[RMDB]
RNA sequence: GGGAACGACUCGAGUAGAGUCGAAAAGCACCUGGGUUCGCCCAGGUGCAAAGUUCAGUAGCAUGCAAGAUCAAAUCCGAUAGGAUGCUACAGGGAAACCAAAAAGCCAGUGCUUCGGCACUGGCAACUAAACCUUUUACUUCGGUAAAAGGUUUAGAAAAGAAACAACAACAACAAC
Reactivity to DMS in 0.01 (KOAc 150mM, MgCl2 10mM, bicine 150mM(pH8.5), 24C), signal-to-noise 2, nucleotides 027 to 126: g010c000a000c000c000u000g010g010g010u000u020c230g030c000c000c000a000g010g010u020g000c010a010a010a100g010u000u000c020a130g010u020a010g000c000a000u000g010c040a140a160g010a020u000c080a090a070a300u010c130c080g000a050u000a140g010g010a030u000g000c010u000a010c000a120g020g000g010a030a060a100c050c050a040a060a120a120a120g020c000c000a000g030u000g020c000u000u000c140g010g000c000a000c000u010g000g000c000a000a020
Reactivity to 2A3 in 0.01 (KOAc 150mM, MgCl2 10mM, bicine 150mM(pH8.5), 24C), signal-to-noise 1, nucleotides 027 to 126: g000c010a000c000c000u000g000g050g040u010u070c190g110c000c000c000a020g010g000u000g000c010a000a010a000g000u020u050c030a000g000u000a000g000c010a000u130g070c010a060a080g040a270u040c050a060a100a260u080c080c030g030a010u040a070g090g000a010u000g010c000u000a000c000a000g100g040g020a130a050a070c000c040a000a000a100a040a000g010c000c020a010g000u000g010c020u080u170c210g050g000c010a020c010u000g000g000c010a000a000
Conditions: 150 mM KOAc, 10 mM MgCl2 and 150 mM bicine (pH 8.5), 24 C. Chemical mapping of a 177-nucleotide RNA with DMS and 2A3. High 2A3 reactivity points to a flexible backbone, as in loops and unpaired stretches. Reactivities are given for positions 27 through 126.